[RMDB]
Structure probing data (2A3 and DMS) for a 177-nucleotide construct.
RNA sequence: GGGAACGACUCGAGUAGAGUCGAAAAAGACAAAGCUAAUAAGGUUAAGAAUACUCCUUUUUCACACUUGAUAAAUUGUUCAUUUCCUGAAUUUUCUUCACAUACCAGUUCAGUCUCCUCUAAUCAAACUAGGACUGAAUUUCGAUUCAGUCCUAGUAAAAGAAACAACAACAACAAC
Reactivity to 2A3 in 0.01 (KOAc 150mM, MgCl2 10mM, bicine 150mM(pH8.5), 24C), signal-to-noise 6, nucleotides 027 to 126: a000g040a000c050a000a110a020g050c020u080a050a030u130a190a080g050g020u130u050a100a040g050a070a100u060a110c040u110c030c020u050u020u010u060u040c080a070c010a020c090u050u060g020a020u140a170a180a090u120u070g010u030u060c040a050u050u040u010c000c010u010g080a110a100u070u050u020u010c030u010u020c010a020c010a060u050a070c040c010a020g020u050u060c010a000g040u010c010u000c030c020u040c060u110a070a120u120c050a050a080
Reactivity to DMS in 0.01 (KOAc 150mM, MgCl2 10mM, bicine 150mM(pH8.5), 24C), signal-to-noise 3, nucleotides 027 to 126: a110g020a080c070a030a150a080g020c070u010a040a040u040a040a020g010g000u010u020a090a050g010a090a070u030a080c070u020c040c010u000u020u010u020u040c060a080c120a060c080u010u020g000a050u020a050a030a120u050u010g010u050u000c060a070u000u010u000c010c020u010g000a040a020u020u000u020u000c010u010u010c060a040c060a040u010a060c090c030a020g000u000u000c020a070g020u000c030u000c010c010u000c090u020a040a070u030c080a040a100
The 2A3 profile rests on 3,847 reads. The RNA was probed in 150 mM KOAc, 10 mM MgCl2 and 150 mM bicine (pH 8.5) at 24 C. It was measured as part of the RMDB library OK1LIB.